[RMDB]
Conditions: 150 mM KOAc, 10 mM MgCl2 and 150 mM bicine (pH 8.5), 24 C. An RNA of 177 nucleotides, treated with 2A3 and read out base by base. High 2A3 reactivity points to a flexible backbone, as in loops and unpaired stretches. The 2A3 profile rests on 930 reads. Values are in units of 0.01, from 0 to 300, in steps of 10. 2A3 adducts were read by reverse transcription with SuperScript II with manganese.

RNA sequence: GGGAACGACUCGAGUAGAGUCGAAAAACAUGCGCACUACGGUGCGCAUGAGAUGCUCUAGGCAUCACAUUUUCUCCAUGGGGUAUUCCCUCCGCCGGCACUAUGUGUUGCUGGCGUUUUUUUAUAACUACUUGAUCGGUUUCGACCGAUCAAGUAGAAAAGAAACAACAACAACAAC
Reactivity to 2A3 in 0.01 (KOAc 150mM, MgCl2 10mM, bicine 150mM(pH8.5), 24C), signal-to-noise 3, nucleotides 027 to 126: a000c030a010u020g010c000g010c000a000c020u070a050c280g120g000u000g000c010g070c000a000u010g000a000g000a000u030g000c030u060c120u160a100g170g050c000a010u060c000a030c000a010u140u120u070u000c110u010c040c040a060u100g000g020g050g010u110a160u110u180c040c000c000u030c000c000g000c000c000g030g000c010a020c010u290a200u300g120u080g060u210u030g100c000u000g000g000c000g000u000u000u000u000u000u030u000a030u000a020a040